[RMDB]
RNA sequence: GGGAACGACUCGAGUAGAGUCGAAAAGCUAUACCGUUCGCGGUAUAGCAAAAUCUUUCCGAGAUGUACUAAUAGGAGCCUAUUAGUCAACGGUUCGAGUCCAAACGGGUUACUUCGGUAACCCGAAGUUCCUACUAAGCUUCGGCUUAGUAGGAACAAAAGAAACAACAACAACAAC
Reactivity to DMS in 0.01 (KOAc 150mM, MgCl2 10mM, bicine 150mM(pH8.5), 24C), signal-to-noise 1, nucleotides 027 to 126: g000c000u000a000u000a000c000c000g030u010u020c190g020c060g020g020u000a000u010a010g000c000a020a030a050a050u000c060u000u000u000c020c000g020a070g020a100u010g000u000a000c020u010a020a010u000a000g000g020a210g000c290c010u000a010u000u000a000g000u000c010a070a080c040g020g000u000u000c030g030a040g000u000c000c070a020a070a250c010g000g000g000u000u000a000c000u000u010c160g020g000u000a000a010c000c000c000g000a000a040
Reactivity to 2A3 in 0.01 (KOAc 150mM, MgCl2 10mM, bicine 150mM(pH8.5), 24C), signal-to-noise 1, nucleotides 027 to 126: g000c000u010a010u000a000c010c000g040u000u070c300g020c030g040g010u000a000u000a000g000c000a000a000a000a000u020c020u010u060u030c010c000g040a070g000a130u100g070u110a010c000u010a000a030u000a010g160g040a220g200c090c000u030a010u050u010a000g000u000c010a060a040c040g000g000u020u010c000g030a020g050u000c020c030a050a090a110c000g000g000g000u000u000a000c000u020u050c140g070g000u020a030a000c140c000c000g000a000a000
Structure probing data (DMS and 2A3) for a 177-nucleotide construct.
Conditions: 150 mM KOAc, 10 mM MgCl2 and 150 mM bicine (pH 8.5), 24 C.
For DMS the reverse transcriptase was MarathonRT.
Source: RMDB library M2PK50, as collected in RNAgym.
For DMS, 1,177 sequencing reads were counted.